[RMDB]
An RNA of 177 nucleotides, treated with 2A3 and DMS and read out base by base.

RNA sequence: GGGAACGACUCGAGUAGAGUCGAAAAUCAGCCGGCCCCACAGUUCUGAUCACCGGACCAUCGUGGAACAACUUAGCGAAAUUCAAUGUUCUGCUUGAUUUCGUGCCAGAAGAUGUCGUGGAAAACACUGAGGAGCAGUAUUCGUACUGCUCCUCAGAAAAGAAACAACAACAACAAC
Reactivity to 2A3 in 0.01 (KOAc 150mM, MgCl2 10mM, bicine 150mM(pH8.5), 24C), signal-to-noise 1, nucleotides 027 to 126: u050c000a020g080c000c020g080g050c000c000c010c010a020c030a030g080u080u000c000u050g070a130u130c000a000c120c000g020g020a000c020c000a040u050c050g080u050g030g050a030a070c020a020a070c080u050u230a020g030c000g050a010a100a120u180u090c050a070a020u130g020u090u020c020u090g060c010u000u040g000a000u080u040u040c040g040u080g070c040c050a030g010a080a020g030a110u070g040u070c030g010u060g110g000a020a100a030a020c100a010
Reactivity to DMS in 0.01 (KOAc 150mM, MgCl2 10mM, bicine 150mM(pH8.5), 24C), signal-to-noise 2, nucleotides 027 to 126: u000c060a170g000c010c010g020g030c050c030c020c030a040c110a030g000u000u010c070u000g000a130u010c090a040c130c120g020g010a070c080c040a050u000c130g020u010g020g000a050a040c060a050a070c140u010u010a160g000c020g000a010a030a060u000u000c060a040a050u000g000u010u000c060u000g010c080u000u010g010a010u000u000u000c060g040u000g000c110c040a050g000a070a080g000a080u000g020u010c050g000u000g010g020a120a060a070a100c180a100
2A3 adducts were read by reverse transcription with SuperScript II with manganese. For 2A3, 1,173 sequencing reads were counted. The RNA was probed in 150 mM KOAc, 10 mM MgCl2 and 150 mM bicine (pH 8.5) at 24 C.